Overview: Structure probing data (DMS and 2A3) for a 177-nucleotide construct. For 2A3 the reverse transcriptase was SuperScript II with manganese. For DMS the reverse transcriptase was MarathonRT.
RNA sequence: GGGAACGACUCGAGUAGAGUCGAAAAAAUGCAAUUCCUAAAUGGUAGAAGAUGUUGCGAAGCCAGUACCGCCUGGCGAUGAAAUGGCGGACGAAUUAGCAACAAAGGGUAAGGUUUAAUCGCCGAAGGAUACUAAAGAUUUCGAUCUUUAGUAUCCAAAAGAAACAACAACAACAAC
Reactivity to DMS in 0.01 (KOAc 150mM, MgCl2 10mM, bicine 150mM(pH8.5), 24C), signal-to-noise 9, nucleotides 027 to 126: a050a050u030g020c150a120a100u000u000c000c000u000a060a080a240u010g010g020u010a060g010a140a100g000a110u010g010u000u000g010c000g010a120a080g000c020c010a050g010u010a080c010c010g010c030c000u000g000g020c100g010a090u020g010a050a080a090u010g000g020c000g000g010a050c020g010a040a020u010u010a300g000c010a010a010c020a050a100a090g000g010g010u020a090a120g000g010u000u000u010a100a080u010c090g010c010c000g000a080a130
Reactivity to 2A3 in 0.01 (KOAc 150mM, MgCl2 10mM, bicine 150mM(pH8.5), 24C), signal-to-noise 9, nucleotides 027 to 126: a000a000u300g010c060a030a050u030u020c000c000u060a070a060a070u090g010g030u050a040g030a190a030g100a190u090g000u020u000g010c020g040a070a010g040c020c010a020g020u130a300c000c010g010c010c010u050g100g090c120g020a050u120g050a020a070a060u100g000g010c000g000g010a000c010g000a000a040u130u070a040g000c000a000a010c000a010a030a040g120g020g030u160a090a080g020g020u020u020u030a070a010u010c010g000c000c000g000a070a030
The data come from the RNA Mapping Database (RMDB), libraries RFM100 and RFMREP.
The RNA was probed in 150 mM KOAc, 10 mM MgCl2 and 150 mM bicine (pH 8.5) at 24 C.